[RMDB]
RNA sequence: GGGAACGACUCGAGUAGAGUCGAAAACAUGGUAUGGCCUCGCAUCCGGCCUACCCACAGAAUCAACAACUUUGGAUGCGGUGGGCGAGAGCCCUAAGAAGGAGUCUCCUCGCCUGGGGAGCUCCGUAUGACUUAAUGUAUUACCAGGCGAAUACAAACCUGCAUUAUGAUUCGUCAUAAUGCAGGUAAAAGAAACAACAACAACAAC
Reactivity to 2A3 in 0.01 (KOAc 150mM, MgCl2 10mM, bicine 150mM(pH8.5), 24C), signal-to-noise 5, nucleotides 027 to 156: c040a070u080g000g020u110a120u300g000g000c000c020u040c040g000c000a000u000c000c010g010g000c010c000u010a020c000c040c000a150c030a070g170a050a100u200c060a030a150c030a050a090c100u140u170u080g000g010a010u010g000c010g000g050u030g000g000g010c010g000a040g000a030g060c000c000c000u000a040a020g050a030a090g030g000a000g030u050c010u000c060c010u020c000g000c000c000u000g000g000g010g000a000g000c000u000c010c000g030u040a060u060g040a010c020u060u140a100a050u220g150u190a150u140u160a030c010c000a000g000g000c020g010a040a050u190a040c050a020a090
Reactivity to DMS in 0.01 (KOAc 150mM, MgCl2 10mM, bicine 150mM(pH8.5), 24C), signal-to-noise 1, nucleotides 027 to 156: c060a130u020g000g020u000a050u000g040g000c000c010u000c080g000c000a050u020c060c010g080g060c010c000u000a090c030c000c050a300c150a100g000a080a150u000c050a090a140c180a040a130c120u000u010u000g020g020a030u000g000c050g030g040u000g010g010g000c050g090a240g010a200g020c040c030c000u030a030a100g000a110a190g020g010a050g000u010c010u000c010c000u000c020g000c070c040u010g000g000g040g000a110g070c020u000c040c030g030u020a080u000g000a130c060u000u000a100a130u010g000u000a030u000u000a050c000c000a040g040g050c020g000a130a060u000a040c050a090a180